[RMDB]
RNA sequence: GGGAACGACUCGAGUAGAGUCGAAAAGGCAGGCCAGGCUGGGCAGCCCCACAGCCAGAGGAGGCUCCUUGUUGCCUCAUCAUGCCGUCACCUCCCAAAGCUCAUGCUCUGCGACCCCUGUCCUCUGGCGUCCUUCCUGCCAAUGCUGCAGGCAGACUCAUGUGGAGUAUUUCGAUACUCCACAUGAAAAAGAAACAACAACAACAAC
Reactivity to 2A3 in 0.01 (KOAc 150mM, MgCl2 10mM, bicine 150mM(pH8.5), 24C), signal-to-noise 1, nucleotides 027 to 156: g040g000c040a010g010g080c070c050a020g000g010c020u060g000g030g000c060a040g020c030c030c000c000a110c000a030g010c000c010a010g000a000g050g000a000g000g030c020u020c020c010u090u120g160u190u110g000c000c050u040c010a060u080c010a000u110g020c020c000g060u070c020a050c070c020u000c040c000c010a080a030a000g030c020u050c060a060u070g000c020u050c030u140g030c030g080a140c000c000c010c010u020g000u030c000c010u050c060u020g040g000c030g020u010c010c000u040u030c000c010u000g020c000c040a140a100u220g010c040u070g000c060a000g000g000c000a010g020a040c030
Reactivity to DMS in 0.01 (KOAc 150mM, MgCl2 10mM, bicine 150mM(pH8.5), 24C), signal-to-noise 1, nucleotides 027 to 156: g030g020c020a060g000g040c080c090a090g000g020c010u000g070g040g010c060a150g030c010c030c020c070a100c050a130g030c010c020a090g000a070g020g020a100g010g020c010u020c060c050u000u020g010u000u000g000c000c010u010c040a050u050c080a100u000g050c000c000g000u010c040a060c030c030u000c030c000c020a080a130a150g020c030u030c050a160u000g000c020u020c030u000g010c020g000a060c030c010c020c000u000g010u000c020c010u010c000u000g020g050c020g000u000c030c020u020u020c030c020u000g000c020c030a070a160u000g030c090u010g020c020a080g030g000c230a020g000a170c130